[RMDB]
RNA sequence: GGGAACGACUCGAGUAGAGUCGAAAAAGGAUGGAAAGUACGAGUUGACACCCAAGGGCGACAACACCCUGGUCCAGUUUGAGAUCACCGUCGACCCGCAGGUGCCACUGCCCGGCUUCGUGCUGAAUAUAACAACCUCAUUCGUGAGGUUGUUAUAAAAAGAAACAACAACAACAAC
Reactivity to DMS in 0.01 (KOAc 150mM, MgCl2 10mM, bicine 150mM(pH8.5), 24C), signal-to-noise 9, nucleotides 027 to 126: a060g000g010a130u020g010g020a100a080a040g020u000a030c030g000a030g010u000u000g010a040c030a030c020c010c030a060a300g000g000g010c010g010a030c040a080a110c210a130c140c070c060u000g010g010u000c010c010a210g000u000u010u000g010a120g000a020u000c020a030c190c090g000u000c020g010a120c010c010c000g000c300a060g000g010u000g010c010c020a040c170u010g010c040c020c030g000g000c050u000u000c030g020u000g010c010u000g000a080a130
Reactivity to 2A3 in 0.01 (KOAc 150mM, MgCl2 10mM, bicine 150mM(pH8.5), 24C), signal-to-noise 4, nucleotides 027 to 126: a000g100g000a050u180g020g050a290a090a020g020u030a020c010g010a010g020u060u050g100a040c000a010c000c010c020a010a020g020g000g010c000g020a010c000a070a030c020a150c050c010c030u020g000g020u000c020c000a060g040u100u200u240g170a190g000a020u010c000a020c050c050g000u020c000g070a300c020c000c000g000c050a020g000g010u010g000c000c010a030c030u070g000c020c010c000g020g020c030u070u070c020g000u020g030c010u030g050a130a010